This 170-nucleotide RNA was probed chemically with 2A3 and DMS.
2A3 adducts were read by reverse transcription with SuperScript II with manganese.
DMS adducts were read by reverse transcription with MarathonRT.
[RMDB]
RNA sequence: GGGAACGACUCGAGUAGAGUCGAAAAUCGGGAUUUCUUCGUCUCGGACCGGCUCAUCUUCGGCAAAGGGCGGCGGUCCUCAGUGCUCUUACUCUUUUCUGUAAAGAGGAGACUGCUGGACUCUCCGGAACCUGGUGGUUCGCCACCAGGAAAAGAAACAACAACAACAAC
Reactivity to 2A3 in 0.01 (KOAc 150mM, MgCl2 10mM, bicine 150mM(pH8.5), 24C), signal-to-noise 9, nucleotides 027 to 129: u100c010g010g000g020a050u060u080u090c060u100u070c070g060u010c010u000c020g020g010a020c020c000g020g000c010u000c020a050u000c010u110u050c040g020g020c060a080a070a110g040g020g010c010g020g010c010g010g000u000c000c000u000c010a050g000u120g160c000u020c000u080u170a270c010u020c000u040u070u090u050c130u170g250u300a020a020a000g010a000g000g010a000g010a010c020u010g050c040u010g010g010a020c000u010c030u000c070c000g030g030a050a070
Reactivity to DMS in 0.01 (KOAc 150mM, MgCl2 10mM, bicine 150mM(pH8.5), 24C), signal-to-noise 7, nucleotides 027 to 129: u050c020g040g030g000a000u040u070u040c050u040u040c120g000u020c060u030c000g030g040a070c150c080g020g020c030u000c000a000u020c030u040u030c040g000g050c090a030a060a060g000g000g000c060g010g030c300g060g020u030c010c010u000c030a030g000u030g040c080u000c020u020u020a300c030u030c020u000u000u010u010c220u130g040u110a050a030a020g030a040g030g010a000g010a060c000u020g010c120u050g010g010a030c000u040c030u000c070c050g050g030a050a160